[RMDB]
RNA sequence: GGGAACGACUCGAGUAGAGUCGAAAAGAGCGUCGAGAGACGAAGAGAAGUGCACCGAUCAGCAACGGAGAACGUAAUGGUGCACAAGAGUAAGUCAGUGUAACGUUCUCAGGGCACUGGAGGCAGAGCUCAUUAGCAUGUUCGCAUGCUAAUGAGCAAAAGAAACAACAACAACAAC
Reactivity to DMS in 0.01 (KOAc 150mM, MgCl2 10mM, bicine 150mM(pH8.5), 24C), signal-to-noise 4, nucleotides 027 to 126: g010a090g010c030g010u000c010g000a300g000a170g000a000c000g000a100a060g000a130g000a150a070g010u000g000c000a010c000c000g010a150u000c130a110g000c170a100a090c120g000g010a100g010a050a040c030g020u000a150a140u050g020g020u020g000c020a010c010a050a070g000a100g010u030a080a090g000u000c060a040g000u010g020u000a080a060c040g000u010u000c000u000c020a110g010g000g000c030a020c020u010g000g010a060g000g010c060a120g000a160
Reactivity to 2A3 in 0.01 (KOAc 150mM, MgCl2 10mM, bicine 150mM(pH8.5), 24C), signal-to-noise 4, nucleotides 027 to 126: g060a010g010c030g000u020c020g000a030g000a000g000a070c060g030a090a010g100a000g040a250a000g000u010g000c010a010c010c020g060a140u080c060a050g100c020a020a100c050g080g020a070g030a090a000c010g030u050a040a090u190g010g000u010g000c000a000c000a010a000g070a000g080u160a140a030g030u050c060a040g030u000g040u100a100a040c010g010u020u000c000u000c010a000g010g000g000c010a000c040u020g030g030a040g080g000c030a030g000a020
Annotation:
Chemical mapping of a 177-nucleotide RNA with DMS and 2A3. For 2A3 the reverse transcriptase was SuperScript II with manganese. The reactions ran in a buffer of 150 mM KOAc, 10 mM MgCl2 and 150 mM bicine (pH 8.5), at 24 C. For 2A3, 4,563 sequencing reads were counted.